Structure probing data (DMS and 2A3) for a 177-nucleotide construct.
The 2A3 profile rests on 865 reads.
Conditions: 150 mM KOAc, 10 mM MgCl2 and 150 mM bicine (pH 8.5), 24 C.
Reactivities are given for positions 27 through 126.
Source: RMDB library OK1LIB, as collected in RNAgym.

[RMDB]
RNA sequence: GGGAACGACUCGAGUAGAGUCGAAAAAUUCAUUUUGGUCAAAAUUUCAAAAUUAUAGCCUGCCUUUGCAAUACUGCAGCUUUUAGGAUGAAAUAAUGGAAAUGACUGAUUCUAUCAAUAUUGUAUAUCCCAAGUAACUAUUCGUAGUUACUUGGGAAAAAGAAACAACAACAACAAC
Reactivity to DMS in 0.01 (KOAc 150mM, MgCl2 10mM, bicine 150mM(pH8.5), 24C), signal-to-noise 2, nucleotides 027 to 126: a140u070u000c040a070u020u000u020u030g030g020u010c050a070a060a110a060u000u020u030c020a030a060a100a100u000u000a010u000a030g000c070c030u000g000c010c030u000u000u010g060c130a090a060u000a030c090u020g000c010a040g020c050u020u020u020u000a060g010g000a270u000g010a030a050a000u020a050a100u020g000g010a010a040a090u010g000a050c130u010g000a090u010u000c020u010a080u010c050a050a170u020a080u060u000g000u030a080u020a120
Reactivity to 2A3 in 0.01 (KOAc 150mM, MgCl2 10mM, bicine 150mM(pH8.5), 24C), signal-to-noise 2, nucleotides 027 to 126: a030u030u000c010a000u000u140u120u050g030g030u050c040a130a090a120a110u030u050u020c020a000a010a000a200u050u020a030u060a060g020c010c010u000g000c010c030u050u090u200g030c030a060a060u070a300c040u070g030c000a000g040c000u020u110u070u090a010g040g010a020u060g030a080a000a060u150a060a070u050g100g030a000a010a120u150g020a030c040u050g010a080u080u000c010u020a130u090c030a120a040u000a070u250u170g120u080a150u000a020